[RMDB]
RNA sequence: GGGAACGACUCGAGUAGAGUCGAAAACAGCGCUUGCCUAAUUAGCCUGCUAUUGUGGGGACAAUAUCGCAGCCAUCUGGGCCGCUGCCGGAGCGCGGCGGGGUCGGGUGUGUGGAGGCCCCAGGCCGCUCUAGUAUCUCUUCGGAGAUACUAGAGCAAAAGAAACAACAACAACAAC
Reactivity to 2A3 in 0.01 (KOAc 150mM, MgCl2 10mM, bicine 150mM(pH8.5), 24C), signal-to-noise 7, nucleotides 027 to 126: c020a010g040c030g020c110u070u150g040c000c010u100a140a140u110u080a050g020c010c010u020g030c040u070a070u180u200g060u080g030g030g010g040a010c030a060a100u080a050u240c060g000c060a010g050c050c010a030u030c020u040g020g050g010c010c020g020c040u010g000c010c000g290g150a180g030c240g010c020g010g000c010g030g010g010g100u020c000g010g000g000u050g000u020g010u040g050g050a030g040g000c000c010c000c000a010g050g030c020c010
Reactivity to DMS in 0.01 (KOAc 150mM, MgCl2 10mM, bicine 150mM(pH8.5), 24C), signal-to-noise 7, nucleotides 027 to 126: c090a110g000c110g010c050u000u000g010c040c040u000a070a130u010u010a110g010c070c010u000g010c050u000a080u010u010g010u010g010g010g010g010a170c050a050a080u010a060u000c100g010c050a190g010c090c010a020u000c030u000g010g000g010c020c010g020c010u000g000c020c030g020g010a130g020c200g030c010g010g000c020g010g000g010g020u000c010g010g010g010u000g010u000g020u010g000g010a180g010g010c020c010c020c020a070g010g020c090c140
Structure probing data (2A3 and DMS) for a 177-nucleotide construct. Reactivities are rounded to 0.1 and cut off at 0 and 3. Conditions: 150 mM KOAc, 10 mM MgCl2 and 150 mM bicine (pH 8.5), 24 C.